[RMDB]
RNA sequence: GGGAACGACUCGAGUAGAGUCGAAAAUAGCUCCUUCAACUCGUUCUGUCCGGUGAGAAGUGAUCAAGCCUGGCUGACAAGAGGCUCAGGGAGCCCUCACGUACUUUGCUUUUUUACCUGCCAAUCACUAUGCAAAUAGGUUCGCCUAUUUGCAUAGAAAAGAAACAACAACAACAAC
Reactivity to DMS in 0.01 (KOAc 150mM, MgCl2 10mM, bicine 150mM(pH8.5), 24C), signal-to-noise 5, nucleotides 027 to 126: u010a130g020c020u000c010c010u000u010c130a090a120c040u000c020g020u010u000c020u000g010u000c010c040g000g000u000g010a300g000a090a190g020u010g020a090u010c040a070a300g000c010c010u000g010g000c020u000g010a070c120a090a110g000a050g010g020c110u000c170a060g010g000g000a050g020c030c050c020u000c040a090c090g000u000a040c070u000u000u000g000c020u000u000u000u000u020u000a080c030c030u000g020c080c090a070a070u010c150a190
Reactivity to 2A3 in 0.01 (KOAc 150mM, MgCl2 10mM, bicine 150mM(pH8.5), 24C), signal-to-noise 3, nucleotides 027 to 126: u110a000g010c010u000c000c000u030u040c020a050a050c010u010c010g100u160u010c020u030g050u000c010c030g040g000u030g020a070g010a080a080g150u150g160a200u060c030a050a000g010c000c010u020g020g010c010u020g020a010c000a030a090g020a020g090g050c050u050c060a020g040g020g000a010g000c000c010c000u040c010a060c020g050u090a060c030u030u070u080g040c000u050u040u060u020u070u080a100c010c030u040g050c040c030a030a040u080c020a030